RNA sequence: GGGAACGACUCGAGUAGAGUCGAAAAGAUAUGGACUAUGACGCAGCUACAGAGGAAUAUGAAGUCGUCGGAAACGACGACUUCAUAUUCUCCCCACCUGUAGAACUACUGCUAAUAGUCCUAAGUCGAUUAACUAAGGCUUCGGCCUUAGUUAAUCAAAAGAAACAACAACAACAAC
Reactivity to DMS in 0.01 (KOAc 150mM, MgCl2 10mM, bicine 150mM(pH8.5), 24C), signal-to-noise 1, nucleotides 027 to 126: g000a070u020a300u000g020g020a020c010u010a060u000g000a160c300g000c000a010g010c020u010a000c000a000g000a140g050g010a020a020u000a010u050g000a030a030g020u000c000g000u000c030g000g030a130a090a290c000g020a000c020g020a000c000u000u000c020a010u000a000u000u000c010u000c050c030c000c000a300c090c000u000g010u010a000g000a070a090c090u010a300c000u000g000c000u000a300a000u000a000g000u000c000c020u020a030a090g000u000c170
Source: RMDB library TTRINS, as collected in RNAgym. An RNA of 177 nucleotides, treated with DMS and read out base by base. In probing experiments dimethyl sulfate is read out at A N1 and C N3, which are open when not base-paired. The RNA was probed in 150 mM KOAc, 10 mM MgCl2 and 150 mM bicine (pH 8.5) at 24 C. Reactivities are rounded to 0.1 and cut off at 0 and 3.